About this RNA: Chemical mapping of a 177-nucleotide RNA with 2A3 and DMS. The data come from the RNA Mapping Database (RMDB), library OK2TST. Conditions: 150 mM KOAc, 10 mM MgCl2 and 150 mM bicine (pH 8.5), 24 C.
[RMDB]
RNA sequence: GGGAACGACUCGAGUAGAGUCGAAAAAUAAGUGAAACCGGCAGUGUGACCAGCGCCUGCGCUGUUGCCCACAUCAUCGGAUGUUUGUCGGGAUUUUCCCGCAGCCAGCGGGCGUUGCGCAGGGCAACUCCUAAUGCGUGUUCGCACGCAUUAGGAGAAAAGAAACAACAACAACAAC
Reactivity to 2A3 in 0.01 (KOAc 150mM, MgCl2 10mM, bicine 150mM(pH8.5), 24C), signal-to-noise 1, nucleotides 027 to 126: a050u050a070a010g050u000g010a060a020a000c020c010g040g010c010a050g020u040g050u010g170a070c070c030a010g020c060g280c050c000u000g000c000g000c010u040g020u200u220g000c000c000c000a030c000a010u060c010a030u150c120g140g030a040u050g050u050u190u080g240u200c040g030g030g030a030u120u060u140u110c000c000c030g000c030a020g020c000c010a020g000c000g000g020g000c020g080u220u030g000c000g010c000a000g010g000g000c000a000a050
Reactivity to DMS in 0.01 (KOAc 150mM, MgCl2 10mM, bicine 150mM(pH8.5), 24C), signal-to-noise 2, nucleotides 027 to 126: a110u010a030a120g000u010g010a040a120a160c040c050g010g000c040a080g020u000g030u010g000a050c090c060a110g010c000g000c010c000u000g000c010g050c010u010g000u000u010g020c020c010c000a120c030a030u000c110a150u000c240g000g010a060u000g010u020u000u010g030u020c040g020g000g000a240u000u000u000u000c000c000c000g000c070a100g010c060c070a100g020c100g000g030g010c000g030u000u000g010c000g000c030a010g000g010g000c090a070a120
For 2A3 the reverse transcriptase was SuperScript II with manganese.
For DMS the reverse transcriptase was MarathonRT.
DMS (dimethyl sulfate) methylates the pairing face of unpaired adenines and cytosines.